[RMDB]
RNA sequence: GGGAACGACUCGAGUAGAGUCGAAAAGAUAUGGACUAAAGUUAGGGAGCUAUACGACCGAAGAACUAGCUCGGAAACGAGCUAGGGAGGUCCACUAUAGCUUUGAUCUAACUUUAGUCCUAAGUCAGAUAACUCAUAUGUUCGCAUAUGAGUUAUCAAAAGAAACAACAACAACAAC
Reactivity to 2A3 in 0.01 (KOAc 150mM, MgCl2 10mM, bicine 150mM(pH8.5), 24C), signal-to-noise 3, nucleotides 027 to 126: g050a050u120a070u260g010g010a000c000u010a000a000a010g010u010u010a020g000g040g010a010g000c000u000a000u020a040c300g000a010c010c030g300a300a040g000a030a020c000u000a000g000c000u000c010g020g000a070a090a030c010g000a010g010c000u000a000g000g000g020a020g020g000u000c000c000a020c010u010a000u000a000g010c000u300u090u060g030a010u020c000u000a010a000c010u000u010u000a000g000u000c000c000u000a000a000g010u010c010a020
Reactivity to DMS in 0.01 (KOAc 150mM, MgCl2 10mM, bicine 150mM(pH8.5), 24C), signal-to-noise 5, nucleotides 027 to 126: g000a050u010a300u010g000g010a020c000u000a010a000a000g010u000u000a000g000g000g010a020g020c000u000a010u000a010c210g000a010c000c010g000a130a220g010a210a200c010u000a000g000c000u010c000g020g000a110a120a240c010g020a020g010c010u000a000g000g000g010a080g020g010u000c010c100a050c200u000a010u000a010g000c010u000u000u010g000a050u010c010u000a010a010c000u000u010u010a010g000u000c000c000u000a010a070g000u000c070a150
About this RNA: The data come from the RNA Mapping Database (RMDB), library TTRINS. The record gives the reactivity of an RNA of 177 nucleotides to 2A3 and DMS. Values cover nucleotides 27 to 126. For 2A3 the reverse transcriptase was SuperScript II with manganese. The DMS profile rests on 6,318 reads. DMS adducts were read by reverse transcription with MarathonRT.